[RMDB]
RNA sequence: GGGAACGACUCGAGUAGAGUCGAAAACCUACCGGCCGCCCGGUAGGACGAGACUUCGGUCUCGAAUCGAGCGCCGUUCUGCCGCUCGUGCUCGAGGCGUCGGUGGUCGGCGAGCCCACGGACGCAAAAACUCGAGCACAAAUAAAUAGCAGGACAACUAUCGUAUCUAGUUCGCUAGAUACGAUAGAAAAGAAACAACAACAACAAC
Reactivity to 2A3 in 0.01 (KOAc 150mM, MgCl2 10mM, bicine 150mM(pH8.5), 24C), signal-to-noise 5, nucleotides 027 to 156: c000c000u000a010c000c010g020g070c030c020g060c040c010c000g000g000u010a030g020g030a020c020g000a000g000a000c020u110u200c300g080g000u010c000u000c010g020a030a160u180c130g000a000g000c000g000c020c110g000u010u000c000u000g000c000c000g000c010u020c070g000u010g000c000u000c000g000a000g000g010c000g000u000c070g110g000u010g000g010u060c040g010g060c040g020a050g020c010c000c000a000c040g100g000a000c000g000c000a060a130a110a070a150c010u010c010g000a000g010c000a000c000a000a010a000u120a000a030a010u040a000g000c000a000g000g000a000c000a000a010
Reactivity to DMS in 0.01 (KOAc 150mM, MgCl2 10mM, bicine 150mM(pH8.5), 24C), signal-to-noise 2, nucleotides 027 to 156: c010c000u010a030c010c000g030g020c050c150g000c140c020c030g020g010u000a020g010g010a070c060g000a070g040a030c000u010u000c240g000g010u000c000u000c000g000a100a060u010c060g010a030g010c030g010c060c040g020u000u000c010u000g000c010c010g040c040u010c030g030u000g030c010u010c000g000a060g030g000c010g010u010c000g000g040u000g010g000u000c040g020g010c050g000a140g010c250c020c000a020c040g000g030a030c000g000c090a030a070a060a070a200c010u000c010g000a040g000c010a000c020a040a050a110u010a060a070a150u000a050g020c000a030g020g000a040c020a130a220